[RMDB]
Chemical mapping of a 207-nucleotide RNA with 2A3.
Values are in units of 0.01, from 0 to 300, in steps of 10.
It was measured as part of the RMDB library OK3TST.
Conditions: 150 mM KOAc, 10 mM MgCl2 and 150 mM bicine (pH 8.5), 24 C.
For 2A3 the reverse transcriptase was SuperScript II with manganese.
RNA sequence: GGGAACGACUCGAGUAGAGUCGAAAAUGUUCUUGCUCAUGCAUCUGGAGGACAUCUAGGGACCACCUGAUCUAGGCUGGGCUCAGAGUGGCUUGGCUCCAAGCUGCAGGAUGGGUGCAGAUCUGCUUCGUUGGUCUUUCAGACACAUUGGACCAGCGACCCCUGGAAAUUUCGAUUUCCAGGGGUCAAAAGAAACAACAACAACAAC
Reactivity to 2A3 in 0.01 (KOAc 150mM, MgCl2 10mM, bicine 150mM(pH8.5), 24C), signal-to-noise 1, nucleotides 027 to 156: u070g030u000u110c010u000u140g030c020u020c070a060u090g050c010a080u030c040u050g040g020a070g010g010a100c010a060u080c080u110a110g050g000g010a150c020c000a020c020c030u120g160a240u190c070u170a040g020g030c040u000g060g080g010c030u030c050a070g030a030g010u060g050g000c020u040u060g030g030c040u080c030c000a050a110g000c000u020g000c080a080g020g100a060u060g030g000g020u000g020c010a020g000a120u030c030u080g040c100u110u020c000g010u040u020g030g000u000c030u020u180u010c100a050g030a120c050a010c000a070u020u110g030g030a010c090c000a030g000c010